The data come from the RNA Mapping Database (RMDB), library OK2TRN. This 177-nucleotide RNA was probed chemically with DMS and 2A3. The reactions ran in a buffer of 150 mM KOAc, 10 mM MgCl2 and 150 mM bicine (pH 8.5), at 24 C. For 2A3 the reverse transcriptase was SuperScript II with manganese.

[RMDB]
RNA sequence: GGGAACGACUCGAGUAGAGUCGAAAAAUUGCUUGAGGCUAGAAGUUCAAGACAAGCCCUGAAAACAUAGUGAGACCCCCAUCUCUACAGAAAAUUUAAAAAUUGGCUGUGUGUGAUGGCAACUGCCCUUACAGGUGAUGUUCGCAUCACCUGUAAGAAAAGAAACAACAACAACAAC
Reactivity to DMS in 0.01 (KOAc 150mM, MgCl2 10mM, bicine 150mM(pH8.5), 24C), signal-to-noise 3, nucleotides 027 to 126: a120u010u010g000c030u010u010g010a030g020g010c040u000a120g010a150a230g010u000u000c040a020a030g010a100c030a050a060g010c020c020c020u000g000a090a100a090a100c110a030u000a030g030u010g010a100g000a200c070c060c090c000c010a070u000c000u000c010u010a020c040a050g000a030a040a040a030u000u010u000a050a060a040a060a070u010u000g010g010c010u000g000u000g010u000g010u000g010a010u000g000g000c120a080a060c080u000g000c180c040
Reactivity to 2A3 in 0.01 (KOAc 150mM, MgCl2 10mM, bicine 150mM(pH8.5), 24C), signal-to-noise 1, nucleotides 027 to 126: a000u050u070g000c000u010u010g020a070g070g060c030u070a070g090a160a040g160u070u030c000a010a080g020a120c000a020a070g090c010c000c020u030g030a080a060a020a000c060a010u070a040g050u030g060a100g020a020c020c040c000c010c020a000u000c010u000c000u050a010c000a010g010a000a050a000a010u140u180u220a080a190a010a020a040u020u040g030g000c000u020g000u000g010u020g000u020g060a010u030g000g000c000a000a080c080u100g000c030c040